[RMDB]
RNA sequence: GGGAACGACUCGAGUAGAGUCGAAAAAGAACUGCAAACGAUAAUAAUCUCUAUGUGGGUGCGCCAGCUUUAGCUGCUGCUUAAUCCUACGAGGAUUGAAGGUGUGACGGGCAACAGACCCGGAAAAGCUACCAUAUGAGUUCGCUCAUAUGGUAGCAAAAGAAACAACAACAACAAC
Reactivity to 2A3 in 0.01 (KOAc 150mM, MgCl2 10mM, bicine 150mM(pH8.5), 24C), signal-to-noise 2, nucleotides 027 to 126: a010g040a030a010c020u090g010c080a090a070a080c060g030a020u050a090a050u050a030a020u150c070u000c040u100a180u150g000u040g020g000g030u020g020c040g020c040c010a000g000c000u120u120u100a050g010c000u020g020c040u070g000c020u070u160a070a020u080c000c000u000a010c050g030a040g020g020a010u010u090g010a050a060g070g030u060g000u020g090a040c020g000g010g010c020a080a060c030a160g080a220c000c000c000g050g030a050a070a020a010
Reactivity to DMS in 0.01 (KOAc 150mM, MgCl2 10mM, bicine 150mM(pH8.5), 24C), signal-to-noise 4, nucleotides 027 to 126: a070g020a100a060c040u030g010c100a100a080a060c130g020a100u040a060a060u040a040a040u000c020u030c040u000a060u030g020u010g010g000g000u000g010c130g010c230c020a020g020c000u030u050u030a120g000c020u020g000c100u020g000c010u030u010a070a120u020c010c000u000a030c030g010a070g000g000a020u000u000g000a110a090g010g010u010g010u010g010a130c040g000g000g010c010a110a110c160a160g010a140c010c000c010g030g000a050a060a060a100